[RMDB]
RNA sequence: GGGAACGACUCGAGUAGAGUCGAAAAUAGAAGAAGAGGCUAGCUGGUAUUCCGGUGUGGGAUACUUGGUAAUAUGUAACGCUAAUUGCAUAAGAUUGUAGGACGGAAUUUACAGUCUUGGUUUUUAAAAACUUCUCGUAGUUCGCUACGAGAAGAACAUCUUUGUACACUUCGGUGUACAAAGAUGAAAAGAAACAACAACAACAAC
Reactivity to 2A3 in 0.01 (KOAc 150mM, MgCl2 10mM, bicine 150mM(pH8.5), 24C), signal-to-noise 5, nucleotides 027 to 156: u130a000g060a090a000g010a020a010g020a000g040g000c060u060a020g020c000u020g000g030u040a040u040u040c040c020g180g070u190g050u160g100g000g030a030u020a040c020u060u090g030g000u060a060a080u070a080u170g050u050a060a010c070g000c110u070a070a050u130u110g000c010a020u010a100a030g010a020u020u050g010u030a020g010g050a030c060g040g050a030a040u100u090u050a020c030a010g020u000c000u040u030g030g010u030u030u030u120u190a060a130a030a030a030c000u000u000c000u000c000g000u000a000g020u040u050c190g000c090u000a000c010g000a000g000a000a000g000a000a000
Reactivity to DMS in 0.01 (KOAc 150mM, MgCl2 10mM, bicine 150mM(pH8.5), 24C), signal-to-noise 1, nucleotides 027 to 156: u000a100g010a080a090g000a070a050g010a040g040g050c050u010a170g030c000u000g010g000u010a080u000u000c010c000g050g050u010g090u010g000g010g000a020u000a030c000u010u000g010g010u000a040a080u010a100u010g000u000a040a090c080g000c060u030a060a080u010u000g010c000a090u000a050a010g010a050u000u010g050u000a040g020g000a220c010g020g020a080a300u010u000u000a070c000a020g010u000c010u000u010g010g020u000u050u030u000u050a040a060a070a100a140c000u000u000c000u020c010g000u000a030g000u020u010c290g020c030u000a000c000g020a030g000a010a010g020a070a120
An RNA of 207 nucleotides, treated with 2A3 and DMS and read out base by base. For 2A3 the reverse transcriptase was SuperScript II with manganese. For DMS the reverse transcriptase was MarathonRT. Conditions: 150 mM KOAc, 10 mM MgCl2 and 150 mM bicine (pH 8.5), 24 C. Reactivities are given for positions 27 through 156.